[RMDB]
Description
An RNA of 177 nucleotides, treated with DMS and read out base by base. DMS adducts were read by reverse transcription with MarathonRT. Source: RMDB library TTRINS, as collected in RNAgym.
RNA sequence: GGGAACGACUCGAGUAGAGUCGAAAAGAUAUGGACACACAUGUUUUGCUAAAGUCGCGAUAAGCUGCAGUCGGAAACGACUGGCAGCUUUUGACGCGAUAUAGCAAAACAUGUGUGUCCUAAGUCACAUCAGAUAGAGGUUCGCCUCUAUCUGAUGAAAAGAAACAACAACAACAAC
Reactivity to DMS in 0.01 (KOAc 150mM, MgCl2 10mM, bicine 150mM(pH8.5), 24C), signal-to-noise 3, nucleotides 027 to 126: g000a060u000a300u000g010g010a010c000a000c000a000c000a010u000g000u000u010u000u010g000c010u000a000a130a290g020u000c020g040c010g010a210u000a020a010g010c010u000g020c010a040g000u010c000g000g020a120a110a250c020g010a010c010u010g030g020c010a010g000c010u000u000u000u000g010a220c060g000c000g000a010u000a070u000a010g010c000a010a010a010a010c000a000u000g000u000g000u000g000u000c000c000u000a000a080g000u000c030a210